[RMDB]
RNA sequence: GGGAACGACUCGAGUAGAGUCGAAAAGAUAUGGAAACUCUACCCACCGAACUACAGCUACGCUCGGAAACGAGCGAAGCUGCGAGGAGUUUCCUAAGUCAAACUCGACGACUUCGGUCGUCGAGAACUCACUAAAUAGCUUCGGCUAUUUAGUGAGAAAAGAAACAACAACAACAAC
Reactivity to DMS in 0.01 (KOAc 150mM, MgCl2 10mM, bicine 150mM(pH8.5), 24C), signal-to-noise 2, nucleotides 027 to 126: g010a140u010a110u010g010g010a030a030a000c000u010c000u000a150c060c040c040a300c130c060g020a050a080c120u020a240c010a010g010c010u000a030c000g010c010u000c000g000g000a040a060a070c010g000a000g010c000g010a030a000g010c000u010g000c030g020a200g010g000a040g010u000u000u000c000c000u000a060a100g000u010c080a060a160a130c000u000c000g000a000c000g020a020c010u000u010c190g020g030u000c000g010u000c000g000a000g000a030a110
Reactivity to 2A3 in 0.01 (KOAc 150mM, MgCl2 10mM, bicine 150mM(pH8.5), 24C), signal-to-noise 2, nucleotides 027 to 126: g030a040u140a040u130g000g030a000a020a030c010u060c020u070a240c040c050c100a100c040c070g090a210a120c100u120a060c190a000g000c000u020a030c020g010c030u010c000g000g000a010a050a020c000g000a000g000c000g010a000a000g020c010u000g020c020g010a030g000g010a010g000u000u000u030c000c000u020a060a000g130u060c090a110a060a200c000u030c000g000a000c000g000a010c000u070u080c300g080g010u000c000g000u000c000g020a000g000a000a010